[RMDB]
RNA sequence: GGGAACGACUCGAGUAGAGUCGAAAAGAUAUGGAGAGAAGGUCGGGAGCUAUUGGUCGGAAACGACCAUUAGCGAGGAUCGACCCUCUCUCCUAAGUCAAAAUCCUAGUGGUUCGCCACUAGGAAACAGACACUGUGAGUUCGCUCACAGUGUCUGAAAAGAAACAACAACAACAAC
Reactivity to 2A3 in 0.01 (KOAc 150mM, MgCl2 10mM, bicine 150mM(pH8.5), 24C), signal-to-noise 1, nucleotides 027 to 126: g010a030u080a030u080g000g000a010g020a000g020a060a000g020g000u000c050g050g080g240a110g010c010u020a000u010u010g030g020u000c000g020g020a010a010a020c000g030a000c000c000a000u000u000a020g000c010g020a040g050g010a300u160c010g010a000c000c000c000u040c000u000c000u000c010c000u020a010a010g010u000c010a000a000a000a300u040c000c020u010a010g000u010g040g120u080u130c300g090c080c000a020c000u000a000g000g000a020a020a000
Reactivity to DMS in 0.01 (KOAc 150mM, MgCl2 10mM, bicine 150mM(pH8.5), 24C), signal-to-noise 1, nucleotides 027 to 126: g030a000u020a210u010g000g000a000g000a010g030a020a030g010g000u000c000g000g010g000a200g050c030u000a000u000u010g000g020u000c000g010g000a060a050a120c020g010a010c000c000a000u010u010a000g010c010g010a140g010g000a170u000c000g010a020c000c010c040u000c010u000c000u000c000c000u010a030a040g010u000c010a080a090a170a190u000c000c000u000a000g020u000g000g000u000u000c260g010c010c000a020c010u020a010g000g000a000a030a060